[RMDB]
RNA sequence: GGGAACGACUCGAGUAGAGUCGAAAAGAUAUGGAAUGACCCAAGCCGUGUGCUCGUUGAAAUCGGAAACGAUGGAGAGCACCGGCGACUUGCAUUCCUAAGUCAAAGUGUUAGUUCGCUAACACAACAUGGUUAGAGCGUUCGCGCUCUAACCAUGAAAAGAAACAACAACAACAAC
Reactivity to 2A3 in 0.01 (KOAc 150mM, MgCl2 10mM, bicine 150mM(pH8.5), 24C), signal-to-noise 2, nucleotides 027 to 126: g000a000u090a100u250g030g000a020a000u030g080a120c050c020c070a070a050g020c020c020g290u300g020u010g110c010u000c000g300u300u030g000a030a020a000u000c000g000g000a110a030a060c010g010a000u000g000g020a020g000a010g000c000a000c010c000g000g000c050g000a010c010u040u260g040c010a000u010u040c030c010u040a170a020g060u120c110a040a100a120g000u000g000u000u000a020g000u020u060c300g000c230u000a040a000c010a000c010a030a030
Reactivity to DMS in 0.01 (KOAc 150mM, MgCl2 10mM, bicine 150mM(pH8.5), 24C), signal-to-noise 2, nucleotides 027 to 126: g010a100u000a300u030g000g020a000a000u010g000a070c030c100c040a090a300g020c000c000g000u000g030u000g010c000u000c010g000u020u040g010a080a160a020u000c030g010g000a070a100a070c020g000a000u000g030g020a080g000a010g010c000a000c000c000g010g010c000g000a030c090u020u010g010c020a010u000u000c000c000u000a070a090g010u020c160a070a110a160g020u000g010u000u000a020g000u010u000c290g020c000u010a010a010c000a000c010a120a200

An RNA of 177 nucleotides, treated with 2A3 and DMS and read out base by base.
For DMS the reverse transcriptase was MarathonRT.
2A3 adducts were read by reverse transcription with SuperScript II with manganese.
The RNA was probed in 150 mM KOAc, 10 mM MgCl2 and 150 mM bicine (pH 8.5) at 24 C.
For DMS, 1,523 sequencing reads were counted.
It was measured as part of the RMDB library TTRDEL.